[RMDB]
An RNA of 177 nucleotides, treated with DMS and 2A3 and read out base by base. 2A3 adducts were read by reverse transcription with SuperScript II with manganese. For DMS the reverse transcriptase was MarathonRT. The reactions ran in a buffer of 150 mM KOAc, 10 mM MgCl2 and 150 mM bicine (pH 8.5), at 24 C. It was measured as part of the RMDB library OK1LIB.
RNA sequence: GGGAACGACUCGAGUAGAGUCGAAAAGAAAACCGCAGUUGGCUAGCAGAAAGAAAGAGGGUUAAAGCCAACGAAAUAAGUCGGAAAGCACGACCGACAAGAAAAGCCCUACAAUCGUGCAAGAAAAAUCCGUAUGGGAUUUCGAUCCCAUACGGAUAAAAGAAACAACAACAACAAC
Reactivity to DMS in 0.01 (KOAc 150mM, MgCl2 10mM, bicine 150mM(pH8.5), 24C), signal-to-noise 3, nucleotides 027 to 126: g000a100a020a090a240c010c060g080c040a150g000u000u000g000g010c000u020a200g040c240a120g010a080a130a150g010a030a140a140g030a040g000g000g040u000u000a060a080a010g020c000c000a000a010c000g000a080a060a110u020a070a190g000u020c000g000g010a100a070a090g020c010a000c000g010a080c020c000g000a000c010a110a120g010a030a100a090a050g010c030c000c000u020a100c300a110a070u020c000g010u010g000c010a130a190g020a020a050a020a070
Reactivity to 2A3 in 0.01 (KOAc 150mM, MgCl2 10mM, bicine 150mM(pH8.5), 24C), signal-to-noise 2, nucleotides 027 to 126: g080a000a040a000a010c090c010g020c000a020g000u000u000g070g000c030u100a050g070c180a010g190a210a160a000g120a070a120a010g060a210g000g050g030u040u090a120a010a000g000c000c000a000a000c000g000a000a020a000u210a140a010g000u000c000g010g010a070a110a080g010c010a020c000g000a000c000c000g030a000c020a000a020g080a000a050a010a000g030c000c000c000u010a040c040a000a000u020c010g020u000g000c010a000a020g050a010a040a030a000